[RMDB]
RNA sequence: GGGAACGACUCGAGUAGAGUCGAAAACCCUCGUCAGUAUUCUCCAAUACUUGACAAGCUCCUCAUGUCAGACGAAGACUGAAGCUCACCUAGUCUGAGCCGGAAAUCUGCGAUUCUCCUAUGACGCCGACAUGGUUAUUUUCGAAUAACCAUGUCGAAAAGAAACAACAACAACAAC
Reactivity to DMS in 0.01 (KOAc 150mM, MgCl2 10mM, bicine 150mM(pH8.5), 24C), signal-to-noise 5, nucleotides 027 to 126: c010c000c020u030c100g010u010c030a030g010u010a020u000u000c170u050c190c160a090a030u010a020c010u010u030g020a020c010a160a130g000c040u000c040c010u000c030a080u030g000u000c060a040g000a080c050g020a110a090g020a100c070u000g010a120a100g000c030u000c030a050c050c090u010a120g010u010c090u000g000a070g000c010c010g000g000a060a070a050u000c030u000g020c060g010a120u010u000c020u000c030c030u010a070u010g010a070c110g040c140
Reactivity to 2A3 in 0.01 (KOAc 150mM, MgCl2 10mM, bicine 150mM(pH8.5), 24C), signal-to-noise 9, nucleotides 027 to 126: c010c000c000u010c050g020u000c010a000g010u000a050u070u080c120u020c100c060a040a020u010a030c000u090u150g020a010c000a010a010g010c020u040c020c000u050c020a050u080g060u040c020a020g020a140c030g040a080a020g030a050c050u070g070a070a020g010c020u020c020a040c010c050u070a060g030u080c030u030g020a010g010c000c010g020g030a030a070a050u030c020u030g020c020g090a100u100u020c010u010c020c010u080a090u150g030a040c040g040c060